This 177-nucleotide RNA was probed chemically with 2A3 and DMS. Reactivities are given for positions 27 through 126.
RNA sequence: GGGAACGACUCGAGUAGAGUCGAAAAUCAGCAAUAAAAUGUAUUGAAAAUGCUAGAGACGUUAUUGCUACAGCAAUGGAUGUAACUGUUGGCAAGAAAUUAAUAUAGCUUAGGAUAUACAUGCCUCGAGCAUGAGUGAGUUCGCUCACUCAUGCUCAAAAGAAACAACAACAACAAC
Reactivity to 2A3 in 0.01 (KOAc 150mM, MgCl2 10mM, bicine 150mM(pH8.5), 24C), signal-to-noise 4, nucleotides 027 to 126: u070c010a000g060c030a010a080u170a180a220a080a010u030g000u000a000u050u000g010a030a040a000a040u070g000c010u060a020g000a010g000a150c070g180u250u010a000u000u000g000c030u060a020c000a010g070c080a040a120u130g010g180a210u160g220u260a250a160c000u000g020u100u110g060g000c000a000a000g050a090a010a040u130u110a140a050u130a030u050a130g020c000u010u000a000g000g010a000u000a000u000a040c000a000u070g040c000c040u100c150
Reactivity to DMS in 0.01 (KOAc 150mM, MgCl2 10mM, bicine 150mM(pH8.5), 24C), signal-to-noise 1, nucleotides 027 to 126: u000c070a260g010c100a120a000u040a050a100a050a000u000g000u010a030u000u000g000a200a120a060a030u050g000c000u000a000g000a240g010a250c250g000u000u000a130u000u000g020c000u000a000c020a000g000c020a000a140u000g000g000a160u000g020u000a090a230c000u000g000u010u020g040g030c000a070a000g000a060a170a010u000u000a210a040u000a020u000a000g040c150u000u030a010g000g000a190u000a010u000a000c000a000u000g000c090c020u000c170